[RMDB]
RNA sequence: GGGAACGACUCGAGUAGAGUCGAAAAAUAUGAUCCAUGCGAGCCUGACCAACUCGAAGAUCCAGGGCAAAUAUCGCCACUCUUUCUGGAGUGAAAUCUACGAAACGGUGCUGGCGUGGUAUAUCGCGAGAAGACUUACAUUCGUGUAAGUCUUCUCAAAAGAAACAACAACAACAAC
Reactivity to 2A3 in 0.01 (KOAc 150mM, MgCl2 10mM, bicine 150mM(pH8.5), 24C), signal-to-noise 5, nucleotides 027 to 126: a000u200a050u140g020a030u040c010c000a000u020g020c030g100a000g000c000c060u090g060a050c010c030a010a080c050u010c020g010a010a000g010a010u040c060c070a100g020g030g020c050a070a150a050u270a070u130c100g020c010c000a020c040u070c020u050u300u080c100u170g030g010a020g010u090g060a090a080a020u020c010u020a030c040g010a010a030a020c050g030g030u060g030c010u030g070g000c000g000u000g000g010u020a080u030a020u140c050g010c040
Reactivity to DMS in 0.01 (KOAc 150mM, MgCl2 10mM, bicine 150mM(pH8.5), 24C), signal-to-noise 5, nucleotides 027 to 126: a090u000a060u010g010a080u000c010c020a020u010g020c010g000a020g010c020c080u010g010a070c040c060a170a190c170u000c030g000a130a090g020a050u000c060c070a100g000g010g020c060a110a100a100u000a110u010c120g010c010c000a080c030u000c060u000u000u010c170u000g000g010a040g000u000g010a070a080a050u000c020u000a080c080g010a020a070a110c190g000g010u010g010c070u000g010g010c010g040u000g000g010u000a070u010a040u010c100g010c200
Background:
This 177-nucleotide RNA was probed chemically with 2A3 and DMS. The data come from the RNA Mapping Database (RMDB), library OK2TST. Conditions: 150 mM KOAc, 10 mM MgCl2 and 150 mM bicine (pH 8.5), 24 C.